[RMDB]
RNA sequence: GGGAACGACUCGAGUAGAGUCGAAAAGAUAUGGAGGGACUAAGGGAGUCUGACAUCGGAAACGAUGUUAAAGACUUUGAUCUUACUCCCUCCUAAGUCAAAAGGACCCAUCUUCGGAUGGGUCCAAGUUUUAUACUAGGUUCGCCUAGUAUAAAACAAAAGAAACAACAACAACAAC
Reactivity to 2A3 in 0.01 (KOAc 150mM, MgCl2 10mM, bicine 150mM(pH8.5), 24C), signal-to-noise 1, nucleotides 027 to 126: g020a010u030a010u090g020g000a010g010g000g000a010c010u020a020a010g060g050g010a050g070u000c000u040g020a010c000a010u000c010g010g040a030a010a020c000g000a000u000g030u040u060a170a160a000g010a000c020u300u130u280g090a060u030c000u000u000a020c020u010c000c000c010u000c000c000u010a010a000g000u000c010a000a000a090a290g070g020a000c010c000c000a010u000c010u070u140c300g110g030a000u000g000g000g020u000c000c000a000a000
Reactivity to DMS in 0.01 (KOAc 150mM, MgCl2 10mM, bicine 150mM(pH8.5), 24C), signal-to-noise 4, nucleotides 027 to 126: g010a030u000a200u000g000g010a040g010g000g000a010c240u010a010a010g010g000g010a040g030u000c000u000g010a020c000a000u010c000g020g000a060a040a090c010g010a010u000g010u000u010a070a100a080g020a020c000u000u000u010g010a060u010c000u000u000a020c240u000c000c000c000u000c000c000u000a010a080g000u010c020a080a080a150a160g000g000a020c020c010c000a010u000c000u000u020c250g020g000a010u010g000g000g020u000c000c000a000a010

The record gives the reactivity of an RNA of 177 nucleotides to 2A3 and DMS. The 2A3 profile rests on 4,955 reads. The data come from the RNA Mapping Database (RMDB), library TTRDES. As a SHAPE reagent, 2A3 marks flexible, mostly unpaired nucleotides at the ribose 2'-OH.